[RMDB]
Record summary
Chemical mapping of a 177-nucleotide RNA with 2A3 and DMS. It was measured as part of the RMDB libraries RFM100 and RFMREP. For DMS the reverse transcriptase was MarathonRT.

RNA sequence: GGGAACGACUCGAGUAGAGUCGAAAAGAGUAAGUUGGUCAAUUGGCAAAUAGAAUAUUGACACGCAGGCGAAGUUCUGUGUAUUAGCAUUCUAUUGACCAAUUGACUAAUUUACUCAAAAAUAAACCAUCAUGGAGAGUUUCGACUCUCCAUGAUGAAAAGAAACAACAACAACAAC
Reactivity to 2A3 in 0.01 (KOAc 150mM, MgCl2 10mM, bicine 150mM(pH8.5), 24C), signal-to-noise 4, nucleotides 027 to 126: g000a000g000u010a010a000g010u010u010g000g000u000c000a000a000u000u000g010g000c010a000a040a130u010a000g010a000a000u000a010u030u030g010a010c000a000c030g000c000a000g020g010c110g240a300a040g040u140u010c010u000g000u000g000u000a020u030u030a010g020c000a000u000u000c010u000a010u010u010g030a050c010c000a010a000u000u000g000a000c000u000a000a000u000u000u000a000c000u000c000a000a000a000a000a000u020a000a010a000c050
Reactivity to DMS in 0.01 (KOAc 150mM, MgCl2 10mM, bicine 150mM(pH8.5), 24C), signal-to-noise 2, nucleotides 027 to 126: g000a030g000u000a010a010g020u000u030g000g000u000c010a000a000u000u000g010g020c280a020a050a020u000a000g010a040a000u000a070u020u000g010a020c050a020c000g030c020a020g010g000c030g020a120a200g000u050u030c000u010g000u000g000u000a050u020u000a000g000c100a000u010u000c000u000a000u000u000g000a230c000c020a030a010u000u000g010a020c000u010a010a000u000u000u000a000c010u000c010a000a070a060a100a050u030a020a090a060c160